[RMDB]
RNA sequence: GGGAACGACUCGAGUAGAGUCGAAAACCAGAGGGUCGCCCAGGAAUGGCGGGACCCCACUUCAGCAGGGUCCGCGUUCCAUCCUUUCUUACCUGAUGGCCGGCAUGGUCCCAGCCUCCUCGCUGGCGUAAUUACCCUUGUUCGCAAGGGUAAUUACAAAAGAAACAACAACAACAAC
Reactivity to DMS in 0.01 (KOAc 150mM, MgCl2 10mM, bicine 150mM(pH8.5), 24C), signal-to-noise 3, nucleotides 027 to 126: c010c000a070g010a210g010g000g000u010c080g020c040c060c040a150g000g000a060a060u000g000g010c030g000g010g020a020c010c000c010c030a070c070u010u000c180a100g020c080a160g000g000g000u010c000c000g000c020g000u010u010c010c000a080u000c060c040u000u000u010c070u020u020a070c070c050u000g000a140u000g000g000c040c040g000g000c030a100u010g000g010u020c020c000c010a100g020c030c010u000c020c010u000c070g010c030u000g000g020c280
Reactivity to 2A3 in 0.01 (KOAc 150mM, MgCl2 10mM, bicine 150mM(pH8.5), 24C), signal-to-noise 3, nucleotides 027 to 126: c010c000a020g090a030g060g030g000u030c030g050c010c070c030a020g010g040a090a060u110g300g280c050g010g010g050a020c010c020c030c000a060c070u270u250c090a090g060c000a030g040g000g030u020c000c030g070c020g060u080u030c000c010a040u010c000c000u110u130u060c040u110u110a110c030c020u070g070a080u090g080g000c030c000g090g010c050a050u090g020g020u040c000c010c000a000g020c000c010u000c020c010u030c040g050c030u020g020g020c010